[RMDB]
RNA sequence: GGGAACGACUCGAGUAGAGUCGAAAAAGCACCGGAUACGUCCGGUGCAAGGUGGGAUGGGUAGAGAAGGAGCUCAGAGGACGGUGCGCCUUGUUUCCCUUGAGCCCUCCCUCUCUCAUCCCACCAACGUCCCUUAAAGUUUCGACUUUAAGGGACGAAAAGAAACAACAACAACAAC
Reactivity to 2A3 in 0.01 (KOAc 150mM, MgCl2 10mM, bicine 150mM(pH8.5), 24C), signal-to-noise 8, nucleotides 027 to 126: a000g010c000a010c010c000g010g000a030u050a060c280g090u000c000c010g000g000u000g000c000a000a010g000g000u000g000g000g000a000u010g000g010g070u250a000g000a000g010a030a030g020g000a110g000c000u000c000a030g010a050g050g010a020c060g040g050u110g030c160g080c030c020u070u150g070u050u070u060c010c000c000u000u030g000a000g000c010c000c000u010c030c020c010u000c000u000c000u000c000a000u000c000c000c000a000c000c000a000a000
Reactivity to DMS in 0.01 (KOAc 150mM, MgCl2 10mM, bicine 150mM(pH8.5), 24C), signal-to-noise 2, nucleotides 027 to 126: a030g000c000a000c000c020g000g000a010u000a050c170g010u000c000c020g030g020u000g000c020a000a000g000g010u000g030g000g010a000u000g000g000g000u040a000g000a000g010a200a030g010g010a220g040c000u000c000a030g020a080g000g000a080c150g030g000u010g000c150g020c060c030u030u020g000u020u020u020c000c000c010u020u000g000a020g000c010c010c010u000c120c060c000u000c000u000c010u000c000a000u000c040c000c000a010c010c020a000a070